Chemical mapping of a 177-nucleotide RNA with 2A3 and DMS. The 2A3 profile rests on 10,908 reads. The reactions ran in a buffer of 150 mM KOAc, 10 mM MgCl2 and 150 mM bicine (pH 8.5), at 24 C. The data come from the RNA Mapping Database (RMDB), library 15KREP. 2A3 adducts were read by reverse transcription with SuperScript II with manganese. The DMS profile rests on 10,223 reads.

RNA sequence: GGGAACGACUCGAGUAGAGUCGAAAAUCAUCCUGAGAUCGGGGAGCCUCGACGAUCUCUUUGAUCUCCUGAAGGAGGAAGGAGCUCUCGAGCGCUCUCCCGCCCCUCGGAUGGGCCGCUUCCGGCGCAAGUAUCGUAUGUUCGCAUACGAUACUUGAAAAGAAACAACAACAACAAC
Reactivity to 2A3 in 0.01 (KOAc 150mM, MgCl2 10mM, bicine 150mM(pH8.5), 24C), signal-to-noise 5, nucleotides 027 to 126: u050c000a000u010c000c050u140g020a000g000a030u070c010g000g000g010g010a000g000c000c000u000c000g030a040c140g010a020u010c000u000c030u030u020u040g110a110u050c000u070c020c020u190g220a300a130g020g000a000g000g010a010a000g000g000a000g000c000u000c000u000c000g000a010g010c150g000c020u010c020u050c000c010c000g000c000c010c000c000u010c010g010g000a010u010g010g020g000c020c010g000c070u070u040c060c030g040g020c030g000
Reactivity to DMS in 0.01 (KOAc 150mM, MgCl2 10mM, bicine 150mM(pH8.5), 24C), signal-to-noise 5, nucleotides 027 to 126: u010c030a020u000c010c010u010g020a020g000a130u040c030g000g010g010g000a030g010c030c010u000c010g010a030c200g010a010u000c000u000c000u000u000u000g000a140u010c000u000c000c010u000g020a160a160g030g000a030g010g010a060a020g000g010a010g010c110u000c010u000c010g000a010g000c210g010c010u000c000u020c000c010c010g010c090c140c090c010u000c030g000g000a030u000g000g010g010c020c010g010c140u010u000c040c020g010g010c050g010